An RNA of 177 nucleotides, treated with 2A3 and DMS and read out base by base. Reactivities are given for positions 27 through 126. The DMS profile rests on 1,867 reads. Conditions: 150 mM KOAc, 10 mM MgCl2 and 150 mM bicine (pH 8.5), 24 C.

[RMDB]
RNA sequence: GGGAACGACUCGAGUAGAGUCGAAAAAGAUAUGGAACUGCUAAAGAAGCUUGGAUUUAUGGGUGAGGUAGGUCGGAAACGACCUAUGUAGCCCAUUGUCAGCUUCGAUUGGCAGUUCCUAAGUCAACCACGUACUAAUCUUCGGAUUAGUACGUGGAAAAGAAACAACAACAACAAC
Reactivity to 2A3 in 0.01 (KOAc 150mM, MgCl2 10mM, bicine 150mM(pH8.5), 24C), signal-to-noise 1, nucleotides 027 to 126: a000g020a030u040a020u150g000g000a000a020c010u020g000c000u040a060a000a060g030a000a000g020c070u190u300g140g020a090u300u300u070a000u040g000g030g030u060g020a100g000g180u010a010g000g020u020c000g000g000a010a070a090c030g000a000c000c020u010a000u080g000u000a000g000c010c020c010a000u000u010g000u000c000a000g000c010u000u000c000g000a010u050u090g000g030c020a000g010u000u000c000c000u000a000a010g010u020c000a000a140
Reactivity to DMS in 0.01 (KOAc 150mM, MgCl2 10mM, bicine 150mM(pH8.5), 24C), signal-to-noise 2, nucleotides 027 to 126: a110g010a030u030a300u000g000g010a020a010c010u000g000c000u000a030a160a140g000a010a020g000c000u000u040g010g010a010u010u010u000a020u000g020g000g000u000g000a190g020g010u000a010g000g000u000c000g030g000a090a080a220c000g000a000c000c000u000a010u000g000u000a300g000c000c000c000a000u010u010g000u000c020a040g010c000u000u000c010g000a180u000u020g000g010c000a000g010u000u000c020c000u020a030a050g000u000c040a110a300